[RMDB]
RNA sequence: GGGAACGACUCGAGUAGAGUCGAAAAAAGGGUCAAACUGAAUAAAGGAUAUUUGUUCGACUUUGUUAUUAGUUUGAUGCGAUUCAAAAAAGAAUCAGCUCUAGCUACCACCGCAAUAGAUCCUGUUAGAUACAUAGAUCCUCGUCGCGAUAUCGCAGAACUCCACUCAAUUCGUUGAGUGGAGUUCAAAAGAAACAACAACAACAAC
Reactivity to DMS in 0.01 (KOAc 150mM, MgCl2 10mM, bicine 150mM(pH8.5), 24C), signal-to-noise 1, nucleotides 027 to 156: a040a060g000g010g000u000c040a020a010a010c030u010g020a030a040u000a020a070a060g020g020a150u000a040u000u000u020g010u010u000c020g010a110c080u000u000u000g010u000u000a110u010u000a000g010u010u000u010g010a060u000g010c020g020a020u000u000c020a020a140a030a040a080a110g010a040a040u010c020a160g040c050u000c000u000a030g000c010u000a070c000c000a140c060c130g000c000a080a110u000a130g040a040u000c000c040u000g010u000u000a070g000a150u000a060c010a150u000a110g000a030u000c000c020u000c060g000u010c110g000c170g050a050u000a030u020c030g050c040a200
Reactivity to 2A3 in 0.01 (KOAc 150mM, MgCl2 10mM, bicine 150mM(pH8.5), 24C), signal-to-noise 1, nucleotides 027 to 156: a000a000g040g000g000u040c020a030a080a000c060u040g060a040a060u090a120a080a060g010g010a030u050a030u150u040u140g060u010u020c010g040a040c060u070u120u020g070u020u020a120u100u030a060g040u000u000u040g050a050u130g020c020g010a000u020u030c040a050a170a150a120a020a050g010a010a000u040c030a040g030c010u020c000u060a010g000c000u040a040c000c060a000c010c010g080c030a030a070u060a160g030a000u010c010c010u000g000u040u040a010g000a040u080a150c100a020u060a060g070a060u040c000c040u060c000g040u060c020g010c000g130a080u030a080u220c040g020c070a000